[RMDB]
RNA sequence: GGGAACGACUCGAGUAGAGUCGAAAACAGUCCAUGCGUUAACAUACAGUCCUUGUUCAUGAGCUGCGCUGACAAUGUCGGUUUCGAUACAAAGUGAUGCUGAGGGAUGAACUGCUGUACAUCCGAUUUUGAUGGCACGCAUGAGUGCAUCCUGUGGUGUGCUUUAAGGAUUCGUCCUUAAAGCACAAAAAGAAACAACAACAACAAC
Reactivity to 2A3 in 0.01 (KOAc 150mM, MgCl2 10mM, bicine 150mM(pH8.5), 24C), signal-to-noise 5, nucleotides 027 to 156: c030a020g060u030c030c000a020u040g010c040g050u050u100a130a050c020a060u160a070c000a050g090u080c040c050u130u120g030u110u070c070a070u080g060a040g030c020u020g070c040g010c030u010g010a030c040a110a150u140g020u050c030g020g050u050u120u200c040g020a010u040a110c040a020a060a030g040u070g050a070u070g010c050u050g020a140g010g140g000a000u050g010a030a030c030u060g000c020u030g000u050a060c000a070u000c040c050g090a140u060u060u100u240g080a060u040g010g030c050a020c020g000c020a030u080g030a050g060u110g010c000a020u040c010c020u020g050u070g070g090
Reactivity to DMS in 0.01 (KOAc 150mM, MgCl2 10mM, bicine 150mM(pH8.5), 24C), signal-to-noise 3, nucleotides 027 to 156: c070a090g000u000c000c080a080u000g020c070g010u020u000a060a110c080a150u000a060c000a100g020u000c080c030u000u000g020u000u000c020a080u010g020a050g030c010u000g060c050g000c050u000g010a110c080a070a120u000g040u000c000g020g010u000u000u000c030g000a140u000a080c060a060a070a100g030u000g030a080u020g020c010u000g000a190g000g060g010a070u000g030a030a050c030u000g000c020u000g010u000a090c030a060u000c000c090g020a220u000u020u000u000g040a060u000g020g000c130a030c070g070c040a070u000g000a100g030u000g000c040a060u010c010c000u000g000u020g030g030
An RNA of 207 nucleotides, treated with 2A3 and DMS and read out base by base. The reactions ran in a buffer of 150 mM KOAc, 10 mM MgCl2 and 150 mM bicine (pH 8.5), at 24 C. The data come from the RNA Mapping Database (RMDB), library OK3TST.